[RMDB]
RNA sequence: GGGAACGACUCGAGUAGAGUCGAAAACGCCGGGACAUAUAGAUUUUACUUUUGAAGUGAUUAGGGCUUUGAAAGUUAUUGAUUCAUGCGUGGUCAUUUUGGACGCUGUUGCCGGCGUAGAGGCACAUCAUUUACCAGUCUUCGGACUGGUAAAUGAAAAAGAAACAACAACAACAAC
Reactivity to 2A3 in 0.01 (KOAc 150mM, MgCl2 10mM, bicine 150mM(pH8.5), 24C), signal-to-noise 2, nucleotides 027 to 126: c000g000c010c010g000g030g010a000c030a010u280a020u100a150g010a070u110u060u060u110a060c010u020u000u010u010g010a020a000g000u020g040a090u100u230a070g170g220g050c000u030u010u000g030a010a020a000g020u080u070a020u060u090g080a050u030u140c060a030u110g030c050g020u040g040g080u020c040a050u010u160u200u190g080g010a000c000g000c040u060g050u030u060g270c000c010g000g010c010g000u010a010g010a020g010g050c080a020c010a070
Reactivity to DMS in 0.01 (KOAc 150mM, MgCl2 10mM, bicine 150mM(pH8.5), 24C), signal-to-noise 2, nucleotides 027 to 126: c060g030c000c000g010g000g010a020c020a050u010a160u000a210g000a080u000u000u000u000a020c010u010u000u000u000g000a010a000g010u000g010a290u000u030a170g020g010g010c000u010u000u010g010a010a000a010g000u000u010a030u000u020g000a130u000u000c070a060u000g010c040g020u000g000g020u020c050a140u010u000u000u010g010g010a030c020g020c020u000g020u000u000g030c010c000g010g000c020g010u000a010g010a090g000g010c120a100c160a130